[RMDB]
RNA sequence: GGGAACGACUCGAGUAGAGUCGAAAAGAAAGCUCCUCAGCCGUGUGGAGGAGAAUGGCUAUAACCACCGAAACCUGAGGAAACAGGAAGCCACAACGCAAGCCAUGUGGUUAGCACACGGAAGAAACCAGUAAAUGACGUUCGCGUCAUUUACUGGAAAAGAAACAACAACAACAAC
Reactivity to DMS in 0.01 (KOAc 150mM, MgCl2 10mM, bicine 150mM(pH8.5), 24C), signal-to-noise 5, nucleotides 027 to 126: g020a100a110a130g000c000u000c010c000u010c020a160g000c020c000g000u020g030u000g010g010a030g010g000a000g010a100a030u020g000g020c080u000a100u040a070a200c050c040a160c050c020g030a100a120a080c020c000u000g000a100g010g030a130a060a090c020a030g010g020a180a100g020c000c000a020c020a040a080c110g010c090a060a090g030c090c110a230u000g010u000g010g010u000u010a050g010c000a000c000a000c000g000g000a230a110g010a050a100a070
Reactivity to 2A3 in 0.01 (KOAc 150mM, MgCl2 10mM, bicine 150mM(pH8.5), 24C), signal-to-noise 5, nucleotides 027 to 126: g140a010a110a010g030c010u010c000c000u000c020a070g090c010c000g000u020g000u000g010g000a000g030g010a000g000a000a080u080g000g000c020u070a020u050a220a080c020c020a020c000c010g020a130a050a050c010c000u010g000a030g070g300a070a030a020c010a000g020g000a010a010g020c010c000a020c020a130a080c100g090c090a100a080g030c020c030a060u060g010u010g000g040u030u040a020g010c000a000c000a000c010g010g030a010a010g040a000a050a000

Chemical mapping of a 177-nucleotide RNA with DMS and 2A3. For DMS, 7,880 sequencing reads were counted. For 2A3 the reverse transcriptase was SuperScript II with manganese.